[RMDB]
RNA sequence: GGGAACGACUCGAGUAGAGUCGAAAAUAAGGAACAUAGCUAGUUCGACAUACCAUACUACCCUUUUUAAAACUAUCCUAUAUGUUUGAUGCUAGCAUAGCGUAAUUUUGUGUUCUCAUGGUGCAGCUCCCUGCAAACCGUUCGCGGUUUGCAGGGAAAAAGAAACAACAACAACAAC
Reactivity to DMS in 0.01 (KOAc 150mM, MgCl2 10mM, bicine 150mM(pH8.5), 24C), signal-to-noise 1, nucleotides 027 to 126: u020a040a050g000g010a060a090c070a060u000a100g000c010u000a020g000u000u000c000g000a030c000a010u000a120c090c060a070u000a090c200u040a080c060c050c010u000u020u020u020u000a000a130a100a110c130u000a070u010c050c010u000a130u060a010u000g000u020u000u000g010a080u000g010c000u000a020g030c050a110u000a090g000c070g040u020a080a060u000u000u030u050g050u010g000u010u000c040u000c060a070u020g010g030u000g000c030a060g000c110
Reactivity to 2A3 in 0.01 (KOAc 150mM, MgCl2 10mM, bicine 150mM(pH8.5), 24C), signal-to-noise 2, nucleotides 027 to 126: u090a010a000g130g000a000a080c000a010u080a050g050c000u000a000g000u030u100c050g000a000c000a000u030a060c000c000a000u000a200c040u030a050c090c000c120u130u000u000u000u100a210a270a000a000c010u070a130u220c040c050u040a040u000a000u110g070u000u000u300g010a040u010g030c000u000a000g000c020a060u050a020g000c050g040u090a130a300u070u180u110u000g010u000g110u090u000c000u010c040a070u070g050g000u040g000c000a000g000c000